RNA sequence: GGGAACGACUCGAGUAGAGUCGAAAAAUCACCGUGAGGUCGUCGCGAAGCUCUCGUAGCUCAACAAGCAUGCCAAGGACAAGGUCGGUGUCGAGUUGGCGCUCAUGGACCUCAUCGACCACCACGGACCAUGAGACUUUUUCGAAAGUCUCAUGGUAAAAGAAACAACAACAACAAC
Reactivity to 2A3 in 0.01 (KOAc 150mM, MgCl2 10mM, bicine 150mM(pH8.5), 24C), signal-to-noise 5, nucleotides 027 to 126: a000u040c030a010c040c010g000u020g010a030g000g030u020c030g020u080c100g020c070g180a120a020g000c030u000c020u050c120g110u140a010g000c000u010c010a000a060c020a050a000g040c030a020u110g020c020c000a050a070g180g030a090c060a120a060g100g010u060c080g010g030u050g030u050c020g000a060g130u010u020g040g000c100g000c030u030c060a070u120g060g030a040c030c000u000c000a000u030c000g010a000c000c010a020c040c020a010c020g030g020
Reactivity to DMS in 0.01 (KOAc 150mM, MgCl2 10mM, bicine 150mM(pH8.5), 24C), signal-to-noise 5, nucleotides 027 to 126: a070u010c070a210c030c020g020u000g010a090g000g000u010c010g020u000c150g010c150g010a090a060g020c040u000c010u020c180g010u010a030g010c010u010c070a070a070c090a120a150g010c110a080u000g010c010c000a070a130g000g010a050c130a070a100g020g020u010c090g000g030u000g010u010c020g010a180g000u000u000g000g010c090g000c040u000c070a090u000g010g000a030c030c020u000c030a070u010c020g000a030c030c010a150c080c030a050c060g010g010